[RMDB]
RNA sequence: GGGAACGACUCGAGUAGAGUCGAAAAGAAACGGAGAAAACGCGCGAAAUAAAGACUCACUCUGCCGCAGUGAGUCCAGCUAAAGGGCAACGGCGGAAUGGCCGAAAGACGCGGCCAAAAAGAAAAAGGGAUACUAACUCUUCGGAGUUAGUAUCCCAAAAGAAACAACAACAACAAC
Reactivity to 2A3 in 0.01 (KOAc 150mM, MgCl2 10mM, bicine 150mM(pH8.5), 24C), signal-to-noise 1, nucleotides 027 to 126: g000a000a020a000c020g020g030a000g030a030a170a090a000c030g030c000g000c030g000a000a180a000u250a000a150a000g050a050c000u000c030a000c000u040c020u180g140c090c070g070c070a000g000u000g050a000g010u000c000c000a000g040c010u260a020a040a110g010g000g010c000a000a000c000g000g000c090g000g070a130a230u120g050g000c000c000g120a050a080a000g050a050c020g000c020g010g140c000c000a010a150a000a000a000g150a000a000a000a000a080
Source: RMDB library OK1LIB, as collected in RNAgym.
The record gives the reactivity of an RNA of 177 nucleotides to 2A3.
The reactions ran in a buffer of 150 mM KOAc, 10 mM MgCl2 and 150 mM bicine (pH 8.5), at 24 C.
2A3 is a SHAPE reagent: it acylates the 2'-hydroxyl of flexible nucleotides of all four kinds.